Record summary: Structure probing data (DMS) for a 177-nucleotide construct. Reactivities are rounded to 0.1 and cut off at 0 and 3. The reactions ran in a buffer of 150 mM KOAc, 10 mM MgCl2 and 150 mM bicine (pH 8.5), at 24 C. For DMS, 2,282 sequencing reads were counted.

RNA sequence: GGGAACGACUCGAGUAGAGUCGAAAACUUGAGUAUGGAACGGUCGCCCACGUAGAAGGAGGUUGCGACGGAUUGCCCUGUUAGCUGUCUCUGAGGGUAGGGGGCGCGUUAAGAGUAUCCCCAUAGGAUAAAUAUAAAAUUUCGAUUUUAUAUUUAUAAAAGAAACAACAACAACAAC
Reactivity to DMS in 0.01 (KOAc 150mM, MgCl2 10mM, bicine 150mM(pH8.5), 24C), signal-to-noise 2, nucleotides 027 to 126: c050u020u010g010a150g010u030a080u000g010g010a060a040c030g000g000u030c020g000c010c010c030a030c050g010u010a060g020a090a260g000g000a020g010g010u010u020g000c020g000a010c000g000g010a180u010u020g020c160c160c000u020g010u000u000a070g040c000u020g000u000c010u000c010u000g030a200g000g020g050u010a080g010g010g000g010g020c030g000c020g010u010u030a080a110g000a090g020u020a090u020c000c000c000c030a170u030a100g010g000

In probing experiments dimethyl sulfate is read out at A N1 and C N3, which are open when not base-paired.